[RMDB]
RNA sequence: GGGAACGACUCGAGUAGAGUCGAAAAGGAUUGACUUGGCGAUGCGGGCUCUUUUUUGGUUCCAUAUGAACUUUAAAGUAGUUUUUUCGAAUUCUGUGAAGAAAGUCAUUGGUAGCUUGAUGGGGAUGGCAUUGAAUCUGUAAAUUACCUUGGGCAGUAUUUCCGUAGAAUUCGUUCUACGGAAAUAAAAAGAAACAACAACAACAAC
Reactivity to DMS in 0.01 (KOAc 150mM, MgCl2 10mM, bicine 150mM(pH8.5), 24C), signal-to-noise 1, nucleotides 027 to 156: g050g010a130u000u020g010a130c010u000u000g040g000c030g030a050u010g000c140g050g000g010c050u000c010u030u010u000u020u000u020g010g000u000u000c010c020a110u000a100u020g020a040a050c010u000u000u000a020a060a170g010u010a050g010u020u000u000u000u000u000c060g010a070a060u000u000c040u010g050u000g010a070a090g010a050a070a090g010u010c030a040u000u000g020g010u000a050g020c050u010u000g020a070u000g010g000g010g010a100u000g030g000c030a120u000u000g030a050a090u000c050u000g000u000a050a030a090u000u000a040c020c020u000u000g020g030g030c050a100g010